[RMDB]
RNA sequence: GGGAACGACUCGAGUAGAGUCGAAAACCUAUAAUUAUAGCGCCCGAACUAAGCGCCCGGAAAAAGGCUUAGUUGACGAGGAUGGAGGUUAUCGAAUUUCGCGGAUCCUCCCGGCUGAGUGUGCAGAAUACUUAGGGGGUUUCGACCCCCUAAGUAUAAAAGAAACAACAACAACAAC
Reactivity to DMS in 0.01 (KOAc 150mM, MgCl2 10mM, bicine 150mM(pH8.5), 24C), signal-to-noise 2, nucleotides 027 to 126: c010c000u000a110u040a080a120u030u050a120u020a090g000c070g020c030c010c010g000a020a020c030u010a000a020g000c050g020c020c030c030g060g010a080a040a080a040a090g020g000c000u000u020a010g000u000u000g020a160c020g000a110g030g030a100u010g020g020a010g000g010u000u020a120u030c040g000a050a070u000u030u020c090g010c080g020g000a070u000c020c000u000c010c000c270g000g000c010u020g020a100g020u010g000u040g000c010a050g010a160
Reactivity to 2A3 in 0.01 (KOAc 150mM, MgCl2 10mM, bicine 150mM(pH8.5), 24C), signal-to-noise 2, nucleotides 027 to 126: c010c000u020a010u120a210a070u270u090a230u030a140g020c050g030c040c000c000g080a010a000c010u030a040a000g010c050g250c030c000c030g120g150a020a050a000a110a000g070g000c000u000u000a000g000u000u000g050a030c080g010a040g120g000a030u160g020g000a000g060g000u020u120a050u180c020g050a080a090u140u150u250c110g040c050g100g030a010u060c000c040u000c000c020c000g110g000c030u040g020a030g050u200g000u000g010c020a030g050a250